[RMDB]
Chemical mapping of a 177-nucleotide RNA with 2A3 and DMS. Reactivities are given for positions 27 through 126. For 2A3, 41,333 sequencing reads were counted. The DMS profile rests on 18,195 reads. Source: RMDB library TTRDEL, as collected in RNAgym.

RNA sequence: GGGAACGACUCGAGUAGAGUCGAAAAGAUAUGGAGGCUAGCUUUUGACGCCUUUACCAUCGGAAACGAUGGAAAGGGCGAUAAGCUAGCUCCUAAGUCAAAACUCAUUCCGUUCGCGGAAUGAGAACAUUCAAAUGAAGUUCGCUUCAUUUGAAUGAAAAGAAACAACAACAACAAC
Reactivity to 2A3 in 0.01 (KOAc 150mM, MgCl2 10mM, bicine 150mM(pH8.5), 24C), signal-to-noise 8, nucleotides 027 to 126: g030a020u060a040u170g000g020a040g140g300c010u000a000g000c010u110u090u110u220g220a150c080g010c000c000u000u010u030a120c000c000a000u000c000g000g010a070a030a050c010g000a010u000g000g000a030a020a000g030g010g000c030g030a040u030a020a000g000c000u000a000g000c000u000c000c000u000a040a010g040u010c030a000a020a070a250c010u000c000a000u000u000c010c000g020u050u070c300g010c010g090g000a000a000u000g000a000g000a010a020
Reactivity to DMS in 0.01 (KOAc 150mM, MgCl2 10mM, bicine 150mM(pH8.5), 24C), signal-to-noise 9, nucleotides 027 to 126: g010a040u000a300u010g000g000a020g010g010c000u000a000g010c000u000u000u000u010g020a250c080g010c000c000u000u000u000a130c000c000a000u000c000g010g000a120a090a160c000g010a010u010g010g000a050a020a030g000g000g020c000g000a050u010a010a010g000c000u000a000g000c000u000c000c000u000a040a170g000u000c030a070a070a130a150c000u000c000a000u000u000c000c000g020u000u020c220g030c020g010g000a010a000u000g000a000g010a050a130
For DMS the reverse transcriptase was MarathonRT.